An RNA of 177 nucleotides, treated with 2A3 and read out base by base.

RNA sequence: GGGAACGACUCGAGUAGAGUCGAAAAUCAGGUGGCGCCUCUUCAGUCGUACAUUUCAUUUUCAACAAUGAGGGAACUGUUCCUACAGGCGUAUGAUCCACACAAUCCCAGUAGGGUAGAGAGGGACAGCCGGAGUGCUAUUCGUAGCACUCCGGCUAAAAGAAACAACAACAACAAC
Reactivity to 2A3 in 0.01 (KOAc 150mM, MgCl2 10mM, bicine 150mM(pH8.5), 24C), signal-to-noise 1, nucleotides 027 to 126: u030c010a000g000g000u000g000g060c000g070c040c040u040c080u230u040c050a000g000u020c070g060u020a170c040a020u190u190u030c040a020u000u020u000u190c120a170a100c060a170a000u120g000a000g000g090g000a040a040c040u100g000u060u000c010c000u110a040c000a040g000g000c040g010u000a030u000g120a040u070c000c030a040c010a020c020a020a050u070c020c000c030a000g060u080a010g010g000g000u000a010g100a000g000a070g100g000g090a000c050
For 2A3 the reverse transcriptase was SuperScript II with manganese.
Source: RMDB library OK1LIB, as collected in RNAgym.
Reactivities are rounded to 0.1 and cut off at 0 and 3.